[RMDB]
RNA sequence: GGGAACGACUCGAGUAGAGUCGAAAACAGAACUAAAACACACUGGAAACAAUAUCGCGGUAGCAUCUUUCAGCCUUGCGGUUAACCGUAAUUUUAAAGACGCUAACGGAGAGCGUGAAACUGACUUUAUUAACUGUGUCAUCUGGCGACAACAAGCCUCAUCUGUGUAAUUCGUUACACAGAUGAGAAAAGAAACAACAACAACAAC
Reactivity to 2A3 in 0.01 (KOAc 150mM, MgCl2 10mM, bicine 150mM(pH8.5), 24C), signal-to-noise 9, nucleotides 027 to 156: c020a020g100a070a050c070u160a100a040a080a020c080a010c010a020c050u070g050g040a070a090a040c070a110a120u090a050u180c060g010c020g090g020u040a020g010c010a040u020c020u010u070u050c030a010g020c040c050u060u130g110c020g010g070u160u170a080a060c010c000g020u040a020a080u000u060u030u160a020a040a000g030a010c020g000c020u010a030a000c020g060g010a050g000a010g080c030g010u040g050a060a030a020c040u040g080a020c010u090u100u050a080u100u100a120a060c060u060g000u020g020u090c000a040u030c070u080g060g020c020g060a030c020a090a010c020a070a010g060c010
Reactivity to DMS in 0.01 (KOAc 150mM, MgCl2 10mM, bicine 150mM(pH8.5), 24C), signal-to-noise 3, nucleotides 027 to 156: c040a120g000a070a300c070u020a040a080a120a100c030a050c040a110c020u010g000g000a150a140a140c060a050a110u010a080u000c020g050c060g000g010u000a030g010c020a030u000c020u000u000u020c120a120g000c110c120u010u000g010c040g010g020u000u020a060a100c030c000g010u010a010a030u000u000u010u010a030a050a050g000a040c000g050c020u000a060a060c030g000g010a120g000a060g010c030g020u000g000a090a030a070c090u000g000a100c070u000u010u000a120u010u000a060a070c030u000g000u000g000u000c030a140u020c070u000g000g000c060g010a060c050a020a060c090a050a110g000c090

Chemical mapping of a 207-nucleotide RNA with 2A3 and DMS. The RNA was probed in 150 mM KOAc, 10 mM MgCl2 and 150 mM bicine (pH 8.5) at 24 C. 2A3 adducts were read by reverse transcription with SuperScript II with manganese. Values cover nucleotides 27 to 156. It was measured as part of the RMDB library OK3TST. The DMS profile rests on 7,193 reads.